[RMDB]
Source information: Structure probing data (DMS and 2A3) for a 170-nucleotide construct. Conditions: 150 mM KOAc, 10 mM MgCl2 and 150 mM bicine (pH 8.5), 24 C.

RNA sequence: GGGAACGACUCGAGUAGAGUCGAAAAAUAGGCUUAUCAAGAGAGGUGGAGGGACCGGCCCGAUGAAACCCGGCAGCCAGAAAUGGUGCCAAUUCCUGCAGCGGAAACGUUGAAGGAUGAGCCGAUGGAGGCACCUCGUUCGCGAGGUGCAAAAGAAACAACAACAACAAC
Reactivity to DMS in 0.01 (KOAc 150mM, MgCl2 10mM, bicine 150mM(pH8.5), 24C), signal-to-noise 4, nucleotides 027 to 129: a010u030a050g010g020c000u040u050a070u030c090a140a110g050a160g020a050g000g040u010g030g010a030g010g030g000a120c070c230g030g030c000c000c050g020a070u050g010a100a160a080c110c070c030g010g040c090a110g050c000c000a040g030a070a120a090u020g030g060u000g030c060c020a060a100u000u040c020c010u020g020c000a000g030c010g000g050a090a030a110c030g010u020u030g040a070a050g010g010a050u040g020a050g000c050c020g020a060u020g000g000a000g010
Reactivity to 2A3 in 0.01 (KOAc 150mM, MgCl2 10mM, bicine 150mM(pH8.5), 24C), signal-to-noise 3, nucleotides 027 to 129: a000u150a010g030g050c040u090u040a090u180c070a160a000g060a030g010a040g050g040u030g010g050a020g000g000g000a000c010c000g070g040c010c030c000g030a110u070g020a070a040a020c000c010c010g000g000c030a000g200c000c000a010g000a010a050a000u040g000g000u000g000c000c000a000a050u050u030c010c020u020g030c000a000g000c000g020g060a020a040a030c000g000u000u000g060a060a010g010g020a030u040g000a020g020c000c010g010a070u040g060g030a070g020
Reactivities are rounded to 0.1 and cut off at 0 and 3.